[RMDB]
RNA sequence: GGGAACGACUCGAGUAGAGUCGAAAAGAUUACGUGUCGUUGUGGAAUCGAUACUACGCACGAGAUUCCAAGGUCUCUGUAGUACGUCCGCUGGUGACGUCUUUGGAGUCACGAUCGAUAUACGAAAGGUAUCUAGUAGCUUCGGCUACUAGAUACCAAAAGAAACAACAACAACAAC
Reactivity to 2A3 in 0.01 (KOAc 150mM, MgCl2 10mM, bicine 150mM(pH8.5), 24C), signal-to-noise 3, nucleotides 027 to 126: g060a120u120u160a060c040g000u010g030u030c040g010u030u230g030u050g030g060a050a010u180c010g000a040u000a030c050u000a000c040g010c000a010c190g020a040g010a060u120u050c110c040a090a090g120g000u050c000u000c020u020g040u010a040g000u020a020c000g020u000c000c010g020c100u100g020g080u160g000a000c000g100u040c010u030u080u140g030g000a010g040u020c000a020c050g000a040u060c000g000a010u030a000u020a150c050g010a030a030a020
Reactivity to DMS in 0.01 (KOAc 150mM, MgCl2 10mM, bicine 150mM(pH8.5), 24C), signal-to-noise 3, nucleotides 027 to 126: g000a140u030u030a030c120g000u000g010u010c000g020u000u000g010u000g000g000a040a100u020c040g000a140u010a010c020u010a030c070g000c160a090c250g000a100g010a000u010u000c090c210a170a070g010g000u000c010u000c020u040g000u030a040g010u040a010c020g000u010c020c000g000c060u000g000g000u000g000a010c020g010u040c060u000u000u030g020g000a050g000u000c010a020c010g000a030u000c040g020a020u010a090u000a080c050g000a080a140a150